[RMDB]
RNA sequence: GGGAACGACUCGAGUAGAGUCGAAAAAAAGUACUGUGUAUUGCAUUAACCAUAUUAACAUUUGUUGCUUUUCACACGGUAGUAAAUAUGGUGUUGAAAGGAGGAGACGGGCGGGCGCAGUGGCUCAAUAGAAAGGUUAAUUCGUUAACCUUUCUAUAAAAGAAACAACAACAACAAC
Reactivity to DMS in 0.01 (KOAc 150mM, MgCl2 10mM, bicine 150mM(pH8.5), 24C), signal-to-noise 7, nucleotides 027 to 126: a060a050a080g010u000a040c040u000g020u010g000u000a070u000u000g020c050a070u010u010a110a110c070c030a060u010a080u000u010a080a080c090a110u010u000u000g020u000u010g010c050u000u000u000u000c090a050c030a010c030g030g020u000a040g010u010a060a050a070u000a030u000g000g020u010g010u000u000g000a040a050a040g000g010a080g000g010a130g000a070c150g020g010g010c140g000g010g000c080g010c050a050g010u000g010g000c060u000c080a050
Reactivity to 2A3 in 0.01 (KOAc 150mM, MgCl2 10mM, bicine 150mM(pH8.5), 24C), signal-to-noise 4, nucleotides 027 to 126: a000a000a000g040u020a000c020u010g000u010g010u060a070u090u080g030c030a040u070u100a080a070c010c020a030u050a060u180u150a110a060c070a160u080u090u220g080u060u060g050c010u030u020u080u110c040a020c000a000c030g060g010u030a030g050u060a060a110a090u130a050u060g120g010u030g040u060u100g060a080a040a020g020g010a020g030g040a110g020a040c130g000g010g040c090g010g040g000c070g000c020a000g010u030g040g000c020u010c060a020

An RNA of 177 nucleotides, treated with DMS and 2A3 and read out base by base. The reactions ran in a buffer of 150 mM KOAc, 10 mM MgCl2 and 150 mM bicine (pH 8.5), at 24 C.